[RMDB]
RNA sequence: GGGAACGACUCGAGUAGAGUCGAAAAGAGAAGGAGAGGAAGAAGAGUAGUGAUCACGGAGAAGAUUAUGAAUAGAACAAACGGAUGCUUCGAAUCUCAGCUUUUUGUUCAGCUGUUUCUGAAGAUCAUCAAGCUCAAGCUUCAAGCUUUCCUCGGAACCUCGAUAUGAUUUCGAUCAUAUCGAGGUAAAAGAAACAACAACAACAAC
Reactivity to 2A3 in 0.01 (KOAc 150mM, MgCl2 10mM, bicine 150mM(pH8.5), 24C), signal-to-noise 5, nucleotides 027 to 156: g090a000g030a050a010g020g020a030g000a010g060g020a020a020g020a040a010g010a010g010u070a010g000u030g010a040u040c020a020c070g020g030a030g020a060a030g000a020u090u100a060u290g080a080a050u090a140g050a060a000c010a030a040a030c080g050g020a010u060g040c040u100u110c070g070a090a060u030c050u020c070a010g010c000u080u050u020u080u120g050u050u060c030a020g000c040u050g070u140u040u030c030u070g060a090a040g000a030u050c010a000u020c040a070a000g010c020u000c040a020a090g020c010u070u030c020a010a070g000c000u040u060u010c010c010u010c010g030g020a040
Reactivity to DMS in 0.01 (KOAc 150mM, MgCl2 10mM, bicine 150mM(pH8.5), 24C), signal-to-noise 2, nucleotides 027 to 156: g000a070g010a070a070g010g000a090g010a110g040g000a030a040g000a090a190g000a150g020u000a190g040u010g020a070u000c010a240c070g030g000a080g010a050a050g000a190u010u000a080u000g000a070a110u000a030g000a090a040c050a020a050a060c060g000g010a070u000g030c070u010u010c090g010a120a130u000c040u000c060a100g000c030u010u000u000u010u010g000u010u000c010a110g000c040u020g020u000u000u010c020u000g050a070a180g000a030u000c010a020u000c050a040a110g000c010u000c020a030a100g000c060u000u000c010a060a150g010c010u000u000u010c000c010u000c030g020g000a110

Source information
The record gives the reactivity of an RNA of 207 nucleotides to 2A3 and DMS. 2A3 adducts were read by reverse transcription with SuperScript II with manganese. Source: RMDB library OK3TST, as collected in RNAgym. The DMS profile rests on 2,584 reads.